[RMDB]
RNA sequence: GGGAACGACUCGAGUAGAGUCGAAAAGAAAGUGUGCACUUGAUACCGCGUGACUUCGGUCACGUAGUGGCAACGCGCAGGACUUUGCUGCUACUUCUUAGUCCUGCGGUAUCUUGUGCUCACGAAAAAUCCUGGAGCUAUUCGUAGCUCCAGGAUUAAAAGAAACAACAACAACAAC
Reactivity to DMS in 0.01 (KOAc 150mM, MgCl2 10mM, bicine 150mM(pH8.5), 24C), signal-to-noise 1, nucleotides 027 to 126: g010a040a130a140g000u000g000u000g020c000a010c010u000u010g000a020u000a000c000c010g000c000g000u000g000a000c000u000u020c180g000g000u000c210a090c120g000u000a010g030u000g000g000c080a090a030c050g000c050g000c150a030g000g000a070c010u020u000u000g010c080u000g050c020u000a000c040u010u040c000u000u000a000g030u020c000c030u000g000c050g020g020u000a000u000c000u000u000g000u000g000c040u000c000a000c000g010a000a020a010
Reactivity to 2A3 in 0.01 (KOAc 150mM, MgCl2 10mM, bicine 150mM(pH8.5), 24C), signal-to-noise 3, nucleotides 027 to 126: g090a010a090a000g000u020g000u000g000c010a000c000u000u000g000a000u000a000c000c000g000c000g020u010g010a010c010u020u030c100g090g020u110c070a040c100g020u010a000g010u000g020g010c020a030a030c040g030c020g030c140a110g050g060a150c000u030u010u020g020c020u010g010c020u030a030c020u050u080c000u010u010a000g000u000c000c000u020g000c000g000g000u000a000u000c000u000u000g010u000g000c010u010c000a000c010g020a050a000a000